[RMDB]
RNA sequence: GGGAACGACUCGAGUAGAGUCGAAAAUCGAGGCGAGGUUCAGGGGGCUCGAGAUGAUCACCCCCGAUCUGGUGAGAUUCGAGUAGUCAUCUGAUCACCCUCACCGCUUUCGCGAGGAGCACCGGGACCAGCGUAAGCGUUUCGACGCUUACGCUGGAAAAGAAACAACAACAACAAC
Reactivity to DMS in 0.01 (KOAc 150mM, MgCl2 10mM, bicine 150mM(pH8.5), 24C), signal-to-noise 1, nucleotides 027 to 126: u000c040g000a050g000g030c060g040a040g000g010u000u000c030a060g040g000g000g020g010c010u000c010g000a230g010a050u000g000a260u020c000a080c000c000c090c060c080g000a060u020c210u010g000g020u000g000a020g010a300u000u000c030g020a290g000u010a060g010u000c000a050u000c000u000g010a040u000c070a080c170c040c010u020c000a000c050c010g020c080u000u000u000c120g000c060g000a170g000g020a130g030c050a110c020c020g020g100g010a300